[RMDB]
RNA sequence: GGGAACGACUCGAGUAGAGUCGAAAAGAAAGAAAGAAACUCUGCUUAUGAUGAGUUGCAAUAUCUUUUGCCUACAUUGUCUGACAAAUGUUGUCAUGAUAAUAUUUGCAACCUCUGAGGCAUAAAACAAGAGUGACCAAUUCGUUGGUCACUCUUGAAAAGAAACAACAACAACAAC
Reactivity to 2A3 in 0.01 (KOAc 150mM, MgCl2 10mM, bicine 150mM(pH8.5), 24C), signal-to-noise 8, nucleotides 027 to 126: g100a010a040a000g130a040a100a010g080a040a070a020c070u060c050u060g020c010u050u050a040u120g030a030u030g040a040g050u000u000g000c010a010a020u010a050u100c080u060u300u060u070g020c010c010u040a020c020a020u030u020g040u070c130u100g090a090c070a060a080a080u120g030u090u040g010u030c000a010u060g030a010u020a090a020u030a100u020u100u040g000c010a000a020c000c020u000c010u020g010a020g010g020c000a010u100a030a070a000a000
Reactivity to DMS in 0.01 (KOAc 150mM, MgCl2 10mM, bicine 150mM(pH8.5), 24C), signal-to-noise 4, nucleotides 027 to 126: g020a090a080a090g000a060a060a070g000a120a080a090c070u020c090u000g020c030u000u010a130u010g000a040u000g000a100g010u000u000g010c050a040a010u010a030u000c080u010u010u000u000g000c050c010u000a050c070a020u000u010g000u000c100u020g000a050c050a050a060a090u010g020u010u000g010u000c020a030u020g000a020u000a020a010u000a060u010u010u010g000c000a000a040c010c010u000c030u000g000a110g020g010c010a040u030a050a040a080a160
Structure probing data (2A3 and DMS) for a 177-nucleotide construct. The reactions ran in a buffer of 150 mM KOAc, 10 mM MgCl2 and 150 mM bicine (pH 8.5), at 24 C. Reactivities are rounded to 0.1 and cut off at 0 and 3. Reactivities are given for positions 27 through 126. Source: RMDB libraries RFM100 and RFMREP, as collected in RNAgym.